[RMDB]
RNA sequence: GGGAACGACUCGAGUAGAGUCGAAAAGCUUACCUAGCAGAUGAAGAGGAAGCUCAGCACGUUAACAAUUAUUUGGACAACCUGCUUGAGAACACUACAGUUGUGCAAGCAGUUGCUGAUGCUAACACCAUUCGUUGCGGUUCGCCGCAACGAAUGGAAAAGAAACAACAACAACAAC
Reactivity to 2A3 in 0.01 (KOAc 150mM, MgCl2 10mM, bicine 150mM(pH8.5), 24C), signal-to-noise 1, nucleotides 027 to 126: g000c030u050u040a040c010c010u000a000g090c020a040g060a280u160g050a090a090g060a010g180g020a040a000g000c000u000c010a000g000c000a000c070g070u120u140a190a020c050a040a000u170u140a060u140u220u080g010g020a010c020a070a010c020c000u030g000c000u000u050g020a050g000a090a000c030a020c050u300a130c060a060g070u120u070g090u100g040c000a000a000g000c000a000g010u030u070g050c040u000g020a050u150g020c010u020a060a000c030a010
Reactivity to DMS in 0.01 (KOAc 150mM, MgCl2 10mM, bicine 150mM(pH8.5), 24C), signal-to-noise 1, nucleotides 027 to 126: g020c050u040u070a060c000c010u000a140g060c030a200g000a060u000g010a050a100g000a060g000g000a090a030g010c000u000c010a020g000c010a090c180g000u000u000a210a230c090a110a020u010u010a170u000u000u000g010g000a140c130a110a050c150c020u020g000c000u000u000g000a080g010a040a070c020a080c140u000a050c130a090g000u000u000g020u000g000c000a020a000g010c020a000g000u000u000g020c000u000g000a030u000g010c020u020a050a220c130a160